Source: RMDB library 15KLIB, as collected in RNAgym.
Structure probing data (DMS and 2A3) for a 170-nucleotide construct.
The reactions ran in a buffer of 150 mM KOAc, 10 mM MgCl2 and 150 mM bicine (pH 8.5), at 24 C.
RNA sequence: GGGAACGACUCGAGUAGAGUCGAAAAACGGGAACGGUGCCGAGUGAGGCUUAUCCCGGGGGGUAGCGCUCCGUGCCCUUCCAUAGCACUGGGGUCCCGGGCCCCCUCCCAGGAAUGGGAAUGGGGGAUAGUUAGUAGUUCGCUACUAACAAAAGAAACAACAACAACAAC
Reactivity to DMS in 0.01 (KOAc 150mM, MgCl2 10mM, bicine 150mM(pH8.5), 24C), signal-to-noise 9, nucleotides 027 to 129: a100c020g000g020g020a020a020c040g000g030u020g010c010c070g000a100g020u040g010a070g020g000c140u020u020a120u030c020c030c010g020g020g000g000g010g020u020a050g020c170g010c000u020c000c060g020u000g010c040c030c030u030u030c080c040a070u040a090g000c040a010c040u020g000g010g010g010u020c000c010c020g000g020g000c020c000c010c020c000u000c010c010c010a010g000g110a180a100u010g000g000g050a030a050u030g010g000g010g010g010a020u010a030
Reactivity to 2A3 in 0.01 (KOAc 150mM, MgCl2 10mM, bicine 150mM(pH8.5), 24C), signal-to-noise 9, nucleotides 027 to 129: a000c020g010g010g020a040a010c030g020g030u050g010c020c030g030a060g050u160g050a080g060g020c070u090u080a100u130c030c010c010g010g000g000g000g000g030u170a110g100c080g000c070u030c020c020g010u030g020c020c000c000u080u030c050c020a110u120a030g010c010a010c070u070g000g000g020g040u020c000c000c000g000g020g010c000c000c000c000c000u010c000c000c000a010g030g080a100a100u060g010g000g000a030a110u160g020g000g000g000g000a000u010a020